[RMDB]
Chemical mapping of a 207-nucleotide RNA with 2A3 and DMS. Source: RMDB library M2RFPK, as collected in RNAgym. DMS adducts were read by reverse transcription with MarathonRT. The reactions ran in a buffer of 150 mM KOAc, 10 mM MgCl2 and 150 mM bicine (pH 8.5), at 24 C. For 2A3, 6,386 sequencing reads were counted. The DMS profile rests on 8,153 reads.
RNA sequence: GGGAACGACUCGAGUAGAGUCGAAAAAGCAUGUUAGGUUCGCAUGGUGCACUAUUGUGUUAUUAGUAACUAAGUAAGCUUACAAUCGAAAAUGUUUUACCAUAAAAGGGUAAAAUGGUGUAAGACAGAUACCCUCUGAGCUUCGGCUCAGAGGGAAGAUGUCUAAACUGUUCGCAGUUUAGACAUCAAAAGAAACAACAACAACAAC
Reactivity to 2A3 in 0.01 (KOAc 150mM, MgCl2 10mM, bicine 150mM(pH8.5), 24C), signal-to-noise 6, nucleotides 027 to 156: a010g050c010a020u030g000u050u050a060g010g040u060u070c030g000c050a040u040g050g040u060g050c010a010c040u110a140u170u180g020u010g020u050u060a070u040u030a060g080u050a040a020c020u010a050a080g110u040a100a050g080c000u010u010a010c020a060a130u090c060g080a030a060a030a080u050g010u010u000u010u010a000c000c000a010u100a220a200a030a050g100g000g010u030a020a010a010a010u040g020g000u030g000u030a010a010g020a030c020a010g070a050u110a120c000c000c000u000c000u010g000a000g000c000u040u100c220g070g000c000u000c000a000g000a000g000g000g000a010a000
Reactivity to DMS in 0.01 (KOAc 150mM, MgCl2 10mM, bicine 150mM(pH8.5), 24C), signal-to-noise 3, nucleotides 027 to 156: a090g000c010a050u000g010u000u000a080g010g020u000u000c050g000c020a080u000g030g030u000g010c070a090c070u000a080u000u000g010u000g010u000u000a090u000u000a130g010u010a040a120c040u000a090a140g030u000a070a120g000c010u000u000a030c010a050a100u000c050g000a090a090a080a090u000g000u000u000u000u000a010c010c010a090u000a070a120a150a250g000g000g010u000a010a020a040a030u000g000g010u010g000u000a020a040g010a120c070a120g010a220u010a090c000c000c000u000c000u010g010a020g020c010u000u000c300g060g000c000u020c000a000g010a010g010g000g020a010a010